This 170-nucleotide RNA was probed chemically with DMS and 2A3. It was measured as part of the RMDB library 15KLIB. DMS adducts were read by reverse transcription with MarathonRT.
RNA sequence: GGGAACGACUCGAGUAGAGUCGAAAAGUCGGUGAUCCUGCCUCUCCCUGUCGGUGAAUCCUCCCCUGAGAGGCCUCUUCCUAGGCCCGGAGUCUAUCUCCAUCUGGUCCGUCCGGGCCCUCUUCGCUGAGACGAUGGUUCGCCAUCGUCAAAAGAAACAACAACAACAAC
Reactivity to DMS in 0.01 (KOAc 150mM, MgCl2 10mM, bicine 150mM(pH8.5), 24C), signal-to-noise 7, nucleotides 027 to 129: g030u000c040g000g060u040g010a060u020c000c020u020g030c050c030u020c000u010c020c070c060u000g040u040c040g000g000u000g040a090a120u040c040c020u000c010c040c000c000u040g040a080g010a080g000g000c020c050u020c060u030u020c030c040u030a050g030g030c000c000c040g030g030a060g020u020c110u000a110u040c060u030c030c050a090u000c000u000g030g020u020c000c000g040u040c030c000g030g010g070c000c000c000u020c030u010u010c080g000c080u000g000a130
Reactivity to 2A3 in 0.01 (KOAc 150mM, MgCl2 10mM, bicine 150mM(pH8.5), 24C), signal-to-noise 8, nucleotides 027 to 129: g050u040c030g010g050u070g030a120u080c000c020u030g030c000c000u030c010u020c000c010c020u030g140u100c070g040g050u100g110a050a100u070c000c000u030c000c000c010c010u020g040a040g010a040g050g000c000c000u030c010u010u010c010c000u050a040g000g000c000c000c000g000g010a000g010u010c040u070a060u050c030u010c050c010a080u040c080u090g020g010u010c030c020g090u020c010c020g010g000g000c000c000c000u040c020u060u080c060g050c060u030g020a010